[RMDB]
RNA sequence: GGGAACGACUCGAGUAGAGUCGAAAACGGAGAUUCGUCUCCGAACGUGCAAGGAUGAAAAGAACUCUCUCACUGAUAGAUGAUGUCUUCCUACAUUAUCAGAGCACUAACGGGCCGUUCGCGGCCCCUGACUAGCAUUGUUCGCAAUGCUAGUCAGAAAAGAAACAACAACAACAAC
Reactivity to DMS in 0.01 (KOAc 150mM, MgCl2 10mM, bicine 150mM(pH8.5), 24C), signal-to-noise 2, nucleotides 027 to 126: c060g010g000a010g020a080u020u010c260g000u000c000u010c020c010g000a060a030c090g030u000g000c030a140a090g000g000a060u000g010a060a070a120a080g000a070a090c050u000c020u000c030u000c050a140c080u000g000a090u000a060g030a030u000g000a010u020g030u000c040u010u010c020c010u000a220c030a030u000u000a020u000c010a050g010a250g000c050a020c030u030a120a120c170g000g010g000c000c000g030u000u010c170g020c050g020g000c000c000c000
Reactivity to 2A3 in 0.01 (KOAc 150mM, MgCl2 10mM, bicine 150mM(pH8.5), 24C), signal-to-noise 3, nucleotides 027 to 126: c010g010g000a020g000a030u070u090c170g070u000c070u000c000c000g000a070a020c050g050u040g030c030a070a070g070g000a060u100g070a030a080a030a100g110a110a090c010u040c010u030c010u020c070a070c110u050g020a090u090a160g090a050u090g000a020u080g040u080c030u040u030c020c010u020a030c010a020u070u060a030u050c020a020g020a020g120c020a020c080u090a150a020c050g000g010g020c000c000g000u060u080c210g020c010g090g000c020c010c000
The record gives the reactivity of an RNA of 177 nucleotides to DMS and 2A3. The reactions ran in a buffer of 150 mM KOAc, 10 mM MgCl2 and 150 mM bicine (pH 8.5), at 24 C. Source: RMDB library RFMREP, as collected in RNAgym. The DMS profile rests on 1,127 reads. 2A3 adducts were read by reverse transcription with SuperScript II with manganese. The 2A3 profile rests on 2,274 reads.